[RMDB]
The data come from the RNA Mapping Database (RMDB), library TTRDES.
Chemical mapping of a 177-nucleotide RNA with 2A3 and DMS.
For DMS the reverse transcriptase was MarathonRT.

RNA sequence: GGGAACGACUCGAGUAGAGUCGAAAAAGAUAUGGACGAGUUCUCUAGCGUGAACGAAGAACAUUUAAGUCGCUAAUCGGAAACGAUUAGCGUCACAAUGGGAGUUUCGGGACUCGUCCUAAGUCAACAUUACGUACGUGUUCGCACGUACGUAAUGAAAAGAAACAACAACAACAAC
Reactivity to 2A3 in 0.01 (KOAc 150mM, MgCl2 10mM, bicine 150mM(pH8.5), 24C), signal-to-noise 5, nucleotides 027 to 126: a010g070a030u110a020u130g020g010a000c010g010a000g030u170u040c140u040c120u170a140g130c090g300u300g150a030a020c060g170a210a080g040a070a010c020a010u060u090u120a300a100g020u000c000g000c020u010a020a000u010c010g060g010a090a030a030c010g000a010u010u000a000g000c000g000u000c000a000c060a010a030u040g010g020g010a110g010u020u090u110c040g010g010g000a000c000u010c000g000u000c000c000u000a010a000g020u010c010a010a030
Reactivity to DMS in 0.01 (KOAc 150mM, MgCl2 10mM, bicine 150mM(pH8.5), 24C), signal-to-noise 4, nucleotides 027 to 126: a080g000a050u010a300u000g010g000a020c010g020a040g000u010u020c000u010c150u000a150g060c270g040u010g010a010a040c050g050a120a140g000a150a190c010a010u000u000u020a110a090g000u000c000g020c000u020a000a010u000c010g000g000a120a090a160c010g010a010u000u000a000g000c000g010u000c040a040c270a020a000u000g000g000g000a170g010u000u000u000c060g000g000g010a000c000u000c010g010u000c010c010u000a010a090g000u010c040a150a180

About this RNA:
2A3 adducts were read by reverse transcription with SuperScript II with manganese. Conditions: 150 mM KOAc, 10 mM MgCl2 and 150 mM bicine (pH 8.5), 24 C.